[RMDB]
RNA sequence: GGGAACGACUCGAGUAGAGUCGAAAACCCAAAUUUGGUAGGGGAACCGUCCUGAAGGAAUCAAACGGAAGGGACGGAUGGUAUCUUCGGAUGCCAUAGAUAGAUGGCUACCGCUCUUGGUGCGAGGGACUUGUAACUUGUUCGCAAGUUACAAGUCAAAAGAAACAACAACAACAAC
Reactivity to DMS in 0.01 (KOAc 150mM, MgCl2 10mM, bicine 150mM(pH8.5), 24C), signal-to-noise 2, nucleotides 027 to 126: c000c000c010a080a090a050u010u010u010g010g000u020a030g040g000g000g010a110a220c000c000g000u000c000c000u000g020a300a220g000g000a100a120u010c200a100a090a190c010g000g020a190a250g000g010g010a020c000g010g000a070u020g000g010u000a000u000c000u000u000c200g030g010a010u000g010c000c000a000u010a080g010a130u020a090g000a070u000g000g000c020u000a030c030c020g000c090u000c070u010u010g000g000u010g010c130g000a140g000g000
Reactivity to 2A3 in 0.01 (KOAc 150mM, MgCl2 10mM, bicine 150mM(pH8.5), 24C), signal-to-noise 3, nucleotides 027 to 126: c010c000c000a050a060a060u200u090u120g030g010u030a020g000g040g020g090a040a030c000c010g000u000c000c030u110g020a030a020g110g050a070a210u190c090a100a050a060c010g020g020a030a040g050g030g000a000c010g010g000a010u010g000g010u000a020u000c000u030u030c170g080g010a010u000g000c000c000a000u010a010g050a010u040a020g080a070u050g100g010c010u030a020c000c020g020c060u040c030u050u120g110g010u110g060c050g040a080g030g050
Structure probing data (DMS and 2A3) for a 177-nucleotide construct. Source: RMDB library RFMREP, as collected in RNAgym. Conditions: 150 mM KOAc, 10 mM MgCl2 and 150 mM bicine (pH 8.5), 24 C.